[RMDB]
RNA sequence: GGGAACGACUCGAGUAGAGUCGAAAAGAUAUGGAAGCUCAUUUGUCAGAAUCCGUUGAAGAGAUGAUACUCGGAAACGAGUAUCAUCUCUUCAACGAUUCUUGGAUUUAAUGAGGCUUCCUAAGUCCUUAAUACAAUGCUUCGGCAUUGUAUUAAGAAAAGAAACAACAACAACAAC
Reactivity to DMS in 0.01 (KOAc 150mM, MgCl2 10mM, bicine 150mM(pH8.5), 24C), signal-to-noise 2, nucleotides 027 to 126: g000a140u010a300u010g020g000a010a010g000c000u000c000a010u000u010u010g000u000c010a020g000a020a010u000c140c140g030u000u000g000a030a020g010a030g010a020u000g010a020u000a000c000u010c020g000g000a100a090a220c020g010a040g000u000a000u000c000a000u000c000u000c010u000u000c000a000a000c010g000a020u000u000c010u000u020g010g000a010u000u010u000a010a010u000g010a030g020g020c010u000u020c000c010u010a030a100g000u000c070
This 177-nucleotide RNA was probed chemically with DMS. The data come from the RNA Mapping Database (RMDB), library TTRINS. The RNA was probed in 150 mM KOAc, 10 mM MgCl2 and 150 mM bicine (pH 8.5) at 24 C.